[RMDB]
RNA sequence: GGGAACGACUCGAGUAGAGUCGAAAAUAAAGUUGUGUGGGAUGUGAAGCGUGACGAUGUGCCAUAUGAGAAGCAAAAUAUGUCUUCCAUUGUGAGCAUUCGCUAUCUUGUUGAUAUUCCACACUUCUUAGCUGAUGGUGCAGUACGUGAAAAGAAACAAUGUGGACUGUUUCGACAGUCCACAUUGAAAAGAAACAACAACAACAAC
Reactivity to 2A3 in 0.01 (KOAc 150mM, MgCl2 10mM, bicine 150mM(pH8.5), 24C), signal-to-noise 5, nucleotides 027 to 156: u160a000a070a000g010u010u000g000u000g000u000g010g000g010a010u000g040u030g110a050a000g050c040g020u020g040a050c020g020a020u080g020u010g020c010c040a020u010a010u010g250a270g010a030a000g010c030a010a030a140a070u240a080u140g070u010c000u000u000c000c000a020u060u160g010u000g030a050g000c000a000u020u000c000g000c020u040a050u140c040u050u100g040u030u030g030a020u000a010u050u000c010c000a000c000a000c000u010u000c000u010u020a020g000c030u040g010a100u060g040g020u030g000c010a000g020u050a030c070g060u060g090a080a010a010a020g070a040a050a000
Reactivity to DMS in 0.01 (KOAc 150mM, MgCl2 10mM, bicine 150mM(pH8.5), 24C), signal-to-noise 2, nucleotides 027 to 156: u000a060a040a090g010u000u000g020u000g020u000g010g030g020a090u020g010u000g000a060a080g020c140g000u020g010a030c000g020a030u010g020u000g000c040c030a070u000a040u000g010a210g010a040a020g020c040a070a080a120a190u020a190u020g020u000c000u000u000c000c020a150u010u020g030u000g000a130g010c010a110u000u000c010g030c020u000a120u000c020u010u000g030u000u000g020a130u000a060u000u010c000c010a020c010a010c010u000u000c010u000u000a120g020c040u020g020a070u000g000g030u000g030c000a080g030u010a010c100g010u000g010a050a060a040a120g010a190a090a190
Chemical mapping of a 207-nucleotide RNA with 2A3 and DMS. Source: RMDB library OK3TST, as collected in RNAgym. For 2A3 the reverse transcriptase was SuperScript II with manganese. DMS adducts were read by reverse transcription with MarathonRT. The DMS profile rests on 3,987 reads. The RNA was probed in 150 mM KOAc, 10 mM MgCl2 and 150 mM bicine (pH 8.5) at 24 C.